RNA sequence: GGGAACGACUCGAGUAGAGUCGAAAACGUACGUGGAGACACGUACGACGAGACUUCGGUCUCGAAUCGGCGGGAGUCUUUGCCGCCUCGUGUAAGGAGUCGGUUGUCGGCGAGCCAACGGACUCAAGAGCUUACACGAACAAUUGAGCAAAGGCAAGCCUAACUAGUAAUUCGUUACUAGUUAGGCAAAAGAAACAACAACAACAAC
Reactivity to 2A3 in 0.01 (KOAc 150mM, MgCl2 10mM, bicine 150mM(pH8.5), 24C), signal-to-noise 4, nucleotides 027 to 156: c000g000u000a000c000g000u010g010g030a070g010a030c000a000c000g000u010a000c000g000a030c010g000a000g000a000c010u090u120c260g110g010u000c010u010c000g010a070a120u100c040g030g000c030g020g010g030a210g020u000c000u000u000u000g000c000c000g000c000c010u010c000g000u020g000u000a000a010g030g010a010g010u010c110g050g000u070u000g020u020c020g020g140c250g040a020g010c020c000a010a000c020g100g000a000c000u000c030a040a050g140a020g160c010u010u010a000c000a000c000g000a020a020c040a030a060u110u300g070a090g050c010a010a000a000g020g010c030a040a010
Reactivity to DMS in 0.01 (KOAc 150mM, MgCl2 10mM, bicine 150mM(pH8.5), 24C), signal-to-noise 3, nucleotides 027 to 156: c070g020u000a010c010g050u010g020g010a300g000a300c000a020c010g010u000a000c000g010a130c020g010a260g020a030c010u000u000c160g050g010u010c000u000c010g000a020a040u000c000g000g020c010g010g000g010a120g020u000c020u000u000u010g030c000c000g010c120c030u010c020g000u000g010u000a010a030g020g000a050g030u000c010g000g030u010u000g010u000c030g010g020c160g030a300g020c210c000a030a060c000g000g010a050c010u010c010a080a070g000a300g010c020u000u000a020c020a040c010g010a040a030c080a080a190u000u000g000a120g010c010a020a010a030g010g000c010a110a290